[RMDB]
Chemical mapping of a 177-nucleotide RNA with 2A3 and DMS. The RNA was probed in 150 mM KOAc, 10 mM MgCl2 and 150 mM bicine (pH 8.5) at 24 C. For 2A3 the reverse transcriptase was SuperScript II with manganese. High DMS reactivity at an A or C suggests that its Watson-Crick edge is free. Reactivities are rounded to 0.1 and cut off at 0 and 3. Values cover nucleotides 27 to 126.

RNA sequence: GGGAACGACUCGAGUAGAGUCGAAAAUAAUCAGAUUUAUGCCGUGGCGCAGGGCAAUAUGAUCGUCUCCGGCUUUUCGGCGGAAGGUGAAGCCGCAAGCGUCACGCAAGGCGUGCCAACUUCCGGAGCCACCUACCAUAUUCGUAUGGUAGGUGGCAAAAGAAACAACAACAACAAC
Reactivity to 2A3 in 0.01 (KOAc 150mM, MgCl2 10mM, bicine 150mM(pH8.5), 24C), signal-to-noise 1, nucleotides 027 to 126: u130a010a100u060c080a030g060a210u090u160u060a060u060g080c080c020g050u030g000g000c030g010c020a050g000g040g000c040a000a010u240a140u140g220a120u050c020g010u030c000u000c030c000g200g020c050u140u090u040u090c030g090g060c000g000g010a010a000g020g000u020g000a030a020g000c000c000g020c120a030a030g000c000g000u020c020a020c010g010c010a030a050g010g050c010g000u020g000c000c010a020a000c080u080u000c000c030g000g000a010
Reactivity to DMS in 0.01 (KOAc 150mM, MgCl2 10mM, bicine 150mM(pH8.5), 24C), signal-to-noise 1, nucleotides 027 to 126: u000a040a110u000c130a130g040a100u000u000u000a010u030g000c050c030g030u030g000g000c040g020c020a120g060g010g010c020a100a060u010a090u000g000a180u000c060g000u000c050u000c010c010g000g020c100u030u000u020u000c150g000g010c050g000g000a020a020g040g020u000g000a110a150g010c000c020g000c150a070a150g000c030g020u010c040a020c020g020c020a090a150g010g000c060g000u010g000c010c080a170a150c120u000u000c000c010g000g000a300
For DMS the reverse transcriptase was MarathonRT.
For DMS, 977 sequencing reads were counted.